[RMDB]
The record gives the reactivity of an RNA of 207 nucleotides to 2A3 and DMS. DMS adducts were read by reverse transcription with MarathonRT. The reactions ran in a buffer of 150 mM KOAc, 10 mM MgCl2 and 150 mM bicine (pH 8.5), at 24 C.
RNA sequence: GGGAACGACUCGAGUAGAGUCGAAAAGAGAUAAUGGUGAACUAGACAGUGUCAGAGAUUGAGAGCAAGAUGGAUUGAUUAAAGGCUUUAGGCAUUAGGGUAACAGGUAAUUGUCAUUUGGUGUCUUCAUUAAGAUAAUUAGCUUGUUCAUAAAAGACAGCUACUAUUUAUUCGUAAAUAGUAGCUGAAAAGAAACAACAACAACAAC
Reactivity to 2A3 in 0.01 (KOAc 150mM, MgCl2 10mM, bicine 150mM(pH8.5), 24C), signal-to-noise 9, nucleotides 027 to 156: g060a000g020a020u060a110a070u130g020g010u040g040a050a040c030u030a040g070a060c050a060g020u020g030u130c030a010g020a010g010a110u070u120g030a060g000a010g050c030a040a020g020a040u060g030g010a020u020u100g020a030u050u160a100a060a040g030g000c030u060u060u090a040g030g000c030a040u030u110a030g040g040g000u030a030a010c010a030g000g030u030a040a040u040u040g020u020c040a070u020u030u090g030g000u040g030u030c000u080u040c030a060u040u080a050a020g020a050u050a060a050u090u020a030g050c020u010u020g010u040u040c030a020u130a120a100a010a030g090a020
Reactivity to DMS in 0.01 (KOAc 150mM, MgCl2 10mM, bicine 150mM(pH8.5), 24C), signal-to-noise 6, nucleotides 027 to 156: g010a130g020a100u000a070a080u000g010g030u000g010a090a100c060u000a110g010a080c040a100g030u000g020u010c050a070g010a110g010a100u000u000g010a130g010a090g030c050a050a080g010a110u000g010g010a130u000u000g020a100u000u000a060a080a090g010g010c050u000u010u010a060g010g000c030a080u010u000a070g020g030g000u000a040a040c030a040g020g020u000a030a080u000u000g010u000c020a160u010u000u000g030g040u000g010u000c080u000u000c050a060u000u010a060a110g010a080u000a010a060u000u000a100g010c040u000u000g010u000u000c040a110u000a050a070a070a150g000a220